[RMDB]
RNA sequence: GGGAACGACUCGAGUAGAGUCGAAAAGAUAUGGAGAUGUGUACCUUCAACAGCACCUAAAUGAAGUUACGUUCGGAAACGAACGUAACUUCAUUUAGGUGACAUGAAGUGUACCAUCUCCUAAGUCCAAGGGAGUUAUGUUCGCAUAACUCCCUUGAAAAGAAACAACAACAACAAC
Reactivity to DMS in 0.01 (KOAc 150mM, MgCl2 10mM, bicine 150mM(pH8.5), 24C), signal-to-noise 4, nucleotides 027 to 126: g010a080u000a300u010g000g000a000g010a010u000g000u020g030u000a000c010c000u000u000c000a030a090c300a240g000c010a010c000c000u010a010a000a010u000g010a010a010g000u000u000a000c000g010u000u010c000g010g010a120a100a240c010g000a010a000c010g000u000a010a000c000u000u000c000a000u000u000u000a000g000g000u000g000a000c050a190u010g010a010a010g000u010g010u000a010c000c000a000u000c000u000c000c000u010a010a070g020u010c050